[RMDB]
RNA sequence: GGGAACGACUCGAGUAGAGUCGAAAACAUUCCAGAGGUCACCCUGGCUUCCAACACCACAGCCUGGCUUGGGCAGUUUUCAAGCCUCGUAUAAAUGACAUCCUCCAGAACAUGUGCUCUGUGCCUGCCUUCCUUCCGUCAGUGAUGUAUCUGGAAACGGUGGUAAAUCAUUCGUGAUUUACCACCGAAAAGAAACAACAACAACAAC
Reactivity to 2A3 in 0.01 (KOAc 150mM, MgCl2 10mM, bicine 150mM(pH8.5), 24C), signal-to-noise 1, nucleotides 027 to 156: c010a070u040u000c000c000a010g040a020g100g040u130c050a070c000c020c000u020g000g040c010u050u040c040c010a040a040c010a060c070c030a040c020a030g040c000c000u030g040g080c030u020u030g050g020g020c080a130g090u080u110u110u200c010a000a020g000c110c000u010c020g100u100a030u010a220a170a140u190g050a040c010a090u060c020c060u050c030c050a010g010a060a060c030a110u050g040u060g050c070u010c010u040g070u040g060c010c000u040g010c000c020u070u080c010c040u070u090c000c010g020u030c030a060g030u000g000a030u030g010u040a110u020c030u000g000g000a040a060a000